The record gives the reactivity of an RNA of 207 nucleotides to DMS and 2A3. For 2A3 the reverse transcriptase was SuperScript II with manganese.
[RMDB]
RNA sequence: GGGAACGACUCGAGUAGAGUCGAAAAAGCCAAGUUUGGGUCGGAGAUGCGAACAUUCCACGCAUCUGAACGGUUGAGAACUUACAAGGGCAAGAGCAGAGUCCUUGUAAGGGCUUUACACGUCAAGUUCACAGACGUGUAAGGCCCGUCGCCCUUCGCUAAGUCAGUAGUUCGCUACUGACUUAGCAAAAGAAACAACAACAACAAC
Reactivity to DMS in 0.01 (KOAc 150mM, MgCl2 10mM, bicine 150mM(pH8.5), 24C), signal-to-noise 2, nucleotides 027 to 156: a090g000c020c020a030a090g040u020u010u000g010g000g020u010c010g010g000a040g010a020u000g000c010g030a050a120c170a170u010u010c020c100a160c000g010c020a020u000c000u000g020a050a070c030g020g010u000u000g000a140g010a070a140c040u000u000a010c000a010a010g010g010g030c000a090a120g000a140g020c070a120g000a240g000u000c010c000u000u000g020u000a010a040g010g020g010c000u000u000u000a030c000a010c000g020u000c010a050a220g000u000u000c130a090c090a270g000a010c000g000u000g000u000a000a020g000g010c000c000c000g010u000c010g000c030c000c020u010u000c080
Reactivity to 2A3 in 0.01 (KOAc 150mM, MgCl2 10mM, bicine 150mM(pH8.5), 24C), signal-to-noise 4, nucleotides 027 to 156: a000g120c030c010a050a050g050u050u060u060g080g000g000u100c040g080g030a060g010a020u010g020c020g050a180a030c050a210u180u130c050c000a050c020g000c010a000u010c000u010g030a080a010c010g000g030u070u140g090a060g010a070a010c000u010u000a000c010a010a000g010g010g010c080a120a060g050a040g160c090a020g030a020g120u000c000c000u000u000g010u010a010a020g000g000g000c000u000u000u000a000c000a000c000g000u000c060a120a150g070u200u210c160a120c000a130g000a010c000g000u000g000u000a000a000g010g000c020c000c000g030u050c020g000c000c000c000u060u080c020

Overview:
The reactions ran in a buffer of 150 mM KOAc, 10 mM MgCl2 and 150 mM bicine (pH 8.5), at 24 C. Reactivities are given for positions 27 through 156.